Source: RMDB library M2RFPK, as collected in RNAgym.
An RNA of 207 nucleotides, treated with 2A3 and read out base by base.
As a SHAPE reagent, 2A3 marks flexible, mostly unpaired nucleotides at the ribose 2'-OH.
Values cover nucleotides 27 to 156.
Conditions: 150 mM KOAc, 10 mM MgCl2 and 150 mM bicine (pH 8.5), 24 C.
[RMDB]
RNA sequence: GGGAACGACUCGAGUAGAGUCGAAAACCUCGCAUCGCAAGUUCGUGCUUGCGACUUACACGUAGGGCGAGGGGUAGGCGAAAGUUGCCAUGAGACCGUAACUUUCGUAGUCAUUGAUAAAGGGGCACAUGCCCUGACUAGUUCGCUAGUCAGGGAAGCCAUCCGUACAGUUCGCUGUACGGAUGGCAAAAGAAACAACAACAACAAC
Reactivity to 2A3 in 0.01 (KOAc 150mM, MgCl2 10mM, bicine 150mM(pH8.5), 24C), signal-to-noise 1, nucleotides 027 to 156: c000c010u000c000g020c000a000u000c000g030c000a010a000g000u260u300c190g220u300g050c050u020u000g020c010g000a000c010u000u100a000c190a020c000g190u280a120g000g050g020c010g000a010g000g000g000g000u060a040g060g060c000g000a020a020a020g010u000u000g000c020c000a020u090g110a070g080a240c000c060g010u000a000a000c000u000u000u000c000g010u060a040g030u030c070a130u000u060g100a070u100a120a220a050g050g010g040g000c060a060c000a100u090g000c020c000c010u000g000a000c000u000a040g040u070u010c280g010c190u000a000g000u020c000a000g000g000g000a000a000